Record summary: Chemical mapping of a 207-nucleotide RNA with DMS and 2A3. For DMS the reverse transcriptase was MarathonRT.
[RMDB]
RNA sequence: GGGAACGACUCGAGUAGAGUCGAAAACAGCGGGCGCAAGCCAAAGAACUGGGAAGUUCUGCGUGAGUACAUGGAGACGUACGAGGGUGACAAGUUCCGCGUCAAGAACUGGAUGACGCGCGAGGCCGAUGACGGCAUCGCUUACGUCACACACCACCUCUCGCAUCAUUUUCGAAUGAUGCGAGAGAAAAGAAACAACAACAACAAC
Reactivity to DMS in 0.01 (KOAc 150mM, MgCl2 10mM, bicine 150mM(pH8.5), 24C), signal-to-noise 1, nucleotides 027 to 156: c030a050g010c060g000g050g080c010g030c120a070a200g020c000c030a070a160a060g000a000a040c030u000g010g000g000a220a020g000u000u000c000u000g000c120g000u000g000a220g030u000a060c140a040u000g000g030a130g000a130c070g030u000a040c080g010a070g000g000g020u000g000a200c010a080a090g010u000u000c000c020g010c050g000u000c050a050a150g030a040a110c010u010g020g010a170u010g010a030c030g130c060g000c000g010a040g000g040c010c000g020a130u010g050a300c010g000g000c000a050u000c010g010c000u000u000a050c020g010u020c000a080c060a110c010a200c030c000a090c130
Reactivity to 2A3 in 0.01 (KOAc 150mM, MgCl2 10mM, bicine 150mM(pH8.5), 24C), signal-to-noise 3, nucleotides 027 to 156: c020a010g040c050g030g010g010c010g010c040a040a040g050c030c040a020a130a020g010a060a030c020u030g010g000g130a070a010g030u010u000c000u020g040c030g040u050g040a020g020u030a040c070a150u130g050g030a080g030a030c010g020u030a010c000g030a070g040g000g050u050g030a040c030a140a010g020u060u000c000c030g020c050g050u060c090a080a060g040a070a080c040u040g050g070a120u020g000a020c000g020c000g010c000g010a010g010g000c020c020g090a160u300g120a120c030g010g000c010a010u010c010g010c010u010u130a030c020g020u010c000a030c010a000c000a000c050c000a030c000

The 2A3 profile rests on 1,920 reads. It was measured as part of the RMDB library OK3TST.